Structure probing data (2A3 and DMS) for a 177-nucleotide construct.
DMS adducts were read by reverse transcription with MarathonRT.
Reactivities are given for positions 27 through 126.
[RMDB]
RNA sequence: GGGAACGACUCGAGUAGAGUCGAAAAUCGAUCGUCCCUUCUUCUUUACCUUCUUCUGGCUCUUCCGAUGAGACGCGACCGGUGGCAUCACCUCUCGGUUCGUCCCAACCUGCUUUUUGUCUAUCUGCUAUUAACUAGACUUCGGUCUAGUUAAUAGAAAAGAAACAACAACAACAAC
Reactivity to 2A3 in 0.01 (KOAc 150mM, MgCl2 10mM, bicine 150mM(pH8.5), 24C), signal-to-noise 4, nucleotides 027 to 126: u070c020g020a010u040c030g050u040c030c030c000u040u030c030u060u020c020u060u090u120a150c010c010u060u050c000u060u030c030u070g070g000c020u010c000u080u040c020c020g080a120u100g030a030g010a040c040g010c070g070a030c010c020g030g010u030g020g030c050a090u130c020a040c010c010u030c010u030c020g020g030u010u030c000g020u000c000c020c000a050a080c000c020u070g090c070u180u140u040u090u120g070u060c030u040a180u040c020u080g040
Reactivity to DMS in 0.01 (KOAc 150mM, MgCl2 10mM, bicine 150mM(pH8.5), 24C), signal-to-noise 7, nucleotides 027 to 126: u010c060g010a070u010c030g010u000c010c010c010u000u010c050u000u010c030u000u000u000a100c060c030u000u000c040u000u000c050u000g010g020c030u000c020u000u000c030c040g000a110u010g010a100g010a070c060g010c100g010a040c040c020g010g010u000g010g020c080a110u010c120a100c030c010u000c020u000c010g010g010u000u000c020g000u000c010c010c010a080a130c100c050u000g000c060u000u000u000u000u000g010u000c040u000a140u000c050u000g010